[RMDB]
RNA sequence: GGGAACGACUCGAGUAGAGUCGAAAAGCAUCCGACAUGGUGCUGGGAUGCGAAUAUCAGCACAAGGCUUUUGCCGAAUUACACCAGAAGAACGCAUGGCUGGUGCAUCAUCCAUGCAUCGUCUCGUAGAGUCGACGAGACGUAAGAUGUCGACAGAAUGCUAUGGCAGGUUCGCCUGCCAUAGCAUAAAAGAAACAACAACAACAAC
Reactivity to 2A3 in 0.01 (KOAc 150mM, MgCl2 10mM, bicine 150mM(pH8.5), 24C), signal-to-noise 1, nucleotides 027 to 156: g020c010a010u000c020c020g000a020c060a050u060g010g010u040g000c010u010g030g000g000a060u010g060c000g000a050a040u140a020u130c040a000g000c040a000c000a080a110g000g000c040u170u160u240u280g010c020c000g000a000a000u190u180a060c110a050c110c000a010g000a100a060g000a130a080c050g060c060a010u000g000g000c000u000g060g020u080g010c000a000u010c000a000u000c040c000a010u300g000c150a020u240c000g000u190c000u000c000g010u010a030g010a000g150u000c050g000a000c020g000a000g000a000c000g000u000a070a020g030a020u030g020u000c000g040a000c000a030g130a150
Overview
This 207-nucleotide RNA was probed chemically with 2A3. The 2A3 profile rests on 450 reads. 2A3 adducts were read by reverse transcription with SuperScript II with manganese. The data come from the RNA Mapping Database (RMDB), library OK3TST. The RNA was probed in 150 mM KOAc, 10 mM MgCl2 and 150 mM bicine (pH 8.5) at 24 C.